This 177-nucleotide RNA was probed chemically with DMS and 2A3.
For 2A3 the reverse transcriptase was SuperScript II with manganese.
DMS adducts were read by reverse transcription with MarathonRT.
RNA sequence: GGGAACGACUCGAGUAGAGUCGAAAAAAUCGAGUUCUUUUUAGCAAAUUGGACAUACGGCGUCUUGGUUUUCAUGGGAUGUAGCUGCAAUACAGCAAGACCGAUUGCAUAAGCCCAUUGAAGUAAAUUCGUAAACGUAGUUCGCUACGUUUACGAAAAAAGAAACAACAACAACAAC
Reactivity to DMS in 0.01 (KOAc 150mM, MgCl2 10mM, bicine 150mM(pH8.5), 24C), signal-to-noise 4, nucleotides 027 to 126: a090a080u020c050g000a080g010u000u010c010u010u000u000u000u020a210g000c080a090a130a050u000u000g000g010a030c020a170u020a070c100g000g010c070g020u000c010u000u010g010g000u020u020u010u000c020a020u000g000g010g010a030u000g030u010a060g010c100u000g010c040a020a010u010a100c100a060g000c100a070a040g020a080c080c050g010a040u000u010g000c020a020u010a020a100g010c030c000c000a020u010u010g030a030a050g000u020a040a050a150
Reactivity to 2A3 in 0.01 (KOAc 150mM, MgCl2 10mM, bicine 150mM(pH8.5), 24C), signal-to-noise 4, nucleotides 027 to 126: a000a010u160c090g010a030g030u020u020c020u040u030u010u010u040a040g030c050a030a040a050u040u040g020g000a010c030a060u240a090c100g030g000c000g030u020c030u090u170g100g030u110u100u060u060c030a020u030g030g010g000a020u030g090u230a020g010c020u000g000c010a010a020u070a190c020a050g040c020a020a040g000a010c000c040g020a030u010u030g000c020a030u090a250a080g000c000c000c030a010u050u180g000a020a000g020u120a010a040a170